[RMDB]
This 177-nucleotide RNA was probed chemically with 2A3 and DMS.

RNA sequence: GGGAACGACUCGAGUAGAGUCGAAAAUUGAUUGGUUUCAUUCUUCCUUUUCCCGUUACUGUCUCCAUGGUGCGGGUGCACAACUAUGGUGGAAGUGGGCGCGUGCAUACUAACAAGGGUGUGCGGUAUAUACCUCGACGUUCGCGUCGAGGUAUAUAAAAGAAACAACAACAACAAC
Reactivity to 2A3 in 0.01 (KOAc 150mM, MgCl2 10mM, bicine 150mM(pH8.5), 24C), signal-to-noise 2, nucleotides 027 to 126: u040u010g090a030u010u150g030g050u000u100u020c040a050u030u030c060u040u070c000c040u050u110u020u060c000c000c000g030u040u120a060c020u030g070u070c000u010c050c000a050u100g010g000u040g020c000g000g060g010u100g030c020a030c010a060a160c030u040a010u050g080g000u050g000g060a080a000g000u060g010g010g010c040g000c000g070u010g010c000a030u010a110c000u090a140a250c050a090a010g070g010g010u030g020u060g020c000g030g010u010
Reactivity to DMS in 0.01 (KOAc 150mM, MgCl2 10mM, bicine 150mM(pH8.5), 24C), signal-to-noise 2, nucleotides 027 to 126: u070u000g050a080u000u030g020g020u000u020u010c000a020u000u000c100u000u000c010c000u010u040u000u000c000c030c030g000u010u000a050c090u000g010u010c040u000c030c030a060u050g030g010u050g000c050g000g000g030u040g100c010a030c050a190a090c070u040a020u040g000g020u010g010g030a060a060g010u000g000g020g000c040g020c120g000u000g010c000a040u000a030c110u010a100a080c220a080a120g000g000g030u030g030u010g000c000g030g010u000
Notes:
For 2A3, 1,456 sequencing reads were counted. Values cover nucleotides 27 to 126. The DMS profile rests on 2,315 reads. For 2A3 the reverse transcriptase was SuperScript II with manganese.